[RMDB]
RNA sequence: GGGAACGACUCGAGUAGAGUCGAAAAAUGGCGUCCUCUUAGACGUCGUCUCACUGGUACAGACUCAGCAAGAACAGUUUGGUUGGGUGUAGUAGCAGACGAGAUGCACUGGACCGGAUUGACUAGAGGAUGCGGCUGGAUUCGUCUGGCUGUAUCCAAAAGAAACAACAACAACAAC
Reactivity to DMS in 0.01 (KOAc 150mM, MgCl2 10mM, bicine 150mM(pH8.5), 24C), signal-to-noise 9, nucleotides 027 to 126: a100u010g010g010c030g010u000c010c080u010c150u010u010a090g010a080c100g030u000c010g010u000c010u000c010a170c030u000g000g000u000a030c030a120g010a040c010u000c010a020g010c030a070a070g010a120a160c250a110g010u000u000u000g020g010u000u000g010g000g010u000g010u010a090g020u000a040g010c010a020g010a090c140g010a030g000a040u000g010c090a080c050u000g010g010a080c070c050g000g000a090u000u010g010a120c050u000a050g010a300
Reactivity to 2A3 in 0.01 (KOAc 150mM, MgCl2 10mM, bicine 150mM(pH8.5), 24C), signal-to-noise 9, nucleotides 027 to 126: a000u100g040g000c030g010u010c010c030u090c100u070u190a070g020a120c040g010u060c010g020u000c020u000c010a030c020u030g000g080u020a020c010a030g050a040c030u010c010a000g000c020a050a040g040a220a080c050a090g080u080u130u140g120g000u040u020g030g000g000u050g030u070a120g010u010a020g090c020a010g030a200c070g020a030g000a010u030g010c040a030c060u070g030g030a030c030c010g060g030a110u080u150g070a100c030u030a040g010a030